[RMDB]
RNA sequence: GGGAACGACUCGAGUAGAGUCGAAAACACCUUAGCAUAGAAAGUUACAAAGGUAUGUCUUUUUUAAAGUUUGCAUUCUAUCAUGCAAAUAUUAUCUAAAUAUGCAUGUGCUGACUACUCAUCUACUGUAUUUUAGGAAAUACAAUUAGGCUGCCUACCUACUGGUGAGGUUCGCCUCACCAGUAGGAAAAGAAACAACAACAACAAC
Reactivity to 2A3 in 0.01 (KOAc 150mM, MgCl2 10mM, bicine 150mM(pH8.5), 24C), signal-to-noise 2, nucleotides 027 to 156: c080a090c020c000u100u140a010g040c010a030u080a120g140a120a190a070g060u180u170a070c090a090a200a010g050g010u070a060u250g000u060c010u030u150u080u060u120u200a050a190a060g040u000u020u020g000c000a000u150u000c030u200a150u290c030a010u010g010c000a020a000a000u090a110u120u040a060u070c060u020a020a070a080u170a030u110g020c040a050u170g030u050g050c070u020g060a040c070u110a070c000u090c070a060u000c050u110a040c010u020g000u010a060u020u020u030u040a050g040g080a070a020a090u130a060c030a010a050u060u000a030g010g010c010u010g000c010c000u010a060
Structure probing data (2A3) for a 207-nucleotide construct.
Reactivities are given for positions 27 through 156.
For 2A3, 792 sequencing reads were counted.
For 2A3 the reverse transcriptase was SuperScript II with manganese.